RNA sequence: GGGAACGACUCGAGUAGAGUCGAAAAGAUAUGGAUGUGUGUAGGGAGUCCGUCGGAAACGACCAGGACGAGGAUCUACCACAUCCUAAGUCAAACGCUAGUCUCGGGUUCGCCCGAGACUAGCGAACCGUUAGUAUUCGUUCGCGAAUACUAACGGAAAAGAAACAACAACAACAAC
Reactivity to DMS in 0.01 (KOAc 150mM, MgCl2 10mM, bicine 150mM(pH8.5), 24C), signal-to-noise 2, nucleotides 027 to 126: g020a020u000a300u000g000g000a010u000g000u010g000u030g030u000a000g010g010g010a120g000u000c000c000g060u010c000g010g000a100a120a230c010g030a010c020c220a180g010g000a030c000g000a060g020g000a030u000c010u000a000c060c000a010c000a010u000c000c000u010a040a110g010u010c020a120a110a170c010g010c000u000a000g020u000c010u010c000g020g000g000u000u030c270g010c000c000c000g010a010g000a000c000u000a000g010c000g000a000a090
Reactivity to 2A3 in 0.01 (KOAc 150mM, MgCl2 10mM, bicine 150mM(pH8.5), 24C), signal-to-noise 1, nucleotides 027 to 126: g030a010u090a050u130g030g000a010u010g000u000g070u030g000u030a000g050g010g020a010g020u020c000c010g020u020c020g040g060a100a050a030c030g010a030c130c230a160g000g000a020c020g050a170g000g000a010u010c000u010a000c000c000a020c000a000u020c000c010u000a090a000g040u000c030a070a120a050c030g000c000u000a000g040u000c020u000c000g060g040g040u110u110c300g080c030c000c040g010a030g000a000c000u000a010g000c010g000a000a000